[RMDB]
RNA sequence: GGGAACGACUCGAGUAGAGUCGAAAAGAAACCUCUUCUUGGCCUGACAGCUUGUAGCUGGAAUUCUACACUGGCCACUCUGGUUGGGAUUGUCAUUUGGCUGGCUAAUGUCACCUCAGAAGGACAAAGGGUUCAGCUUUUGGCACUGCCAGGGGAAGACUCCUAAUGGGUUCGCCCAUUAGGAGUCAAAAGAAACAACAACAACAAC
Reactivity to 2A3 in 0.01 (KOAc 150mM, MgCl2 10mM, bicine 150mM(pH8.5), 24C), signal-to-noise 2, nucleotides 027 to 156: g020a030a100a000c020c010u090c070u140u090c040u140u050g010g000c000c020u060g080a120c010a030g020c010u120u210g070u300a030g000c030u010g040g040a050a030u150u070c040u200a060c090a020c130u010g010g000c000c000a000c000u000c000u030g040g030u160u200g060g040g090a190u110u120g000u010c020a050u010u040u090g010g010c000u000g000g040c020u010a020a020u020g020u020c060a210c130c010u020c040a150g080a220a060g030g010a000c010a000a070a040g300g000g000u170u300c000a010g000c000u030u010u070u000g010g000c030a010c000u020g030c000c000a000g000g000g000g000a010a090